[RMDB]
RNA sequence: GGGAACGACUCGAGUAGAGUCGAAAAGGAAUUGCAGAGGGGCCACCUACCCAGUGUUACCAAUGGGAUUGUAAAUAGAGACUGCCCUGAAGGAGUCUGGGCAUAAAGGAUAUCUUCUAGGUGUGACUAUCUUCAUUUGUUCUAUUUAUUAUAAUCCUCUAUUCGUAUCCUUCGGGAUACGAAUAGAAAAAGAAACAACAACAACAAC
Reactivity to 2A3 in 0.01 (KOAc 150mM, MgCl2 10mM, bicine 150mM(pH8.5), 24C), signal-to-noise 2, nucleotides 027 to 156: g000g000a020a010u010u050g010c010a020g000a020g000g010g020g030c000c010a020c010c090u200a120c000c020c000a040g030u030g040u140u140a150c060c070a070a070u080g000g000g000a080u020u100g030u030a070a040a040u100a050g030a010g020a060c010u040g010c000c000c030u040g110a150a020g030g010a010g050u030c040u030g000g000g000c000a040u130a030a060a000g020g000a020u020a040u120c020u010u010c000u050a010g010g010u050g020u010g010a020c020u030a100u120c000u110u030c040a060u010u060u070g020u020u000c020u020a130u060u140u000a090u140u060a170u060a150a100u030c000c010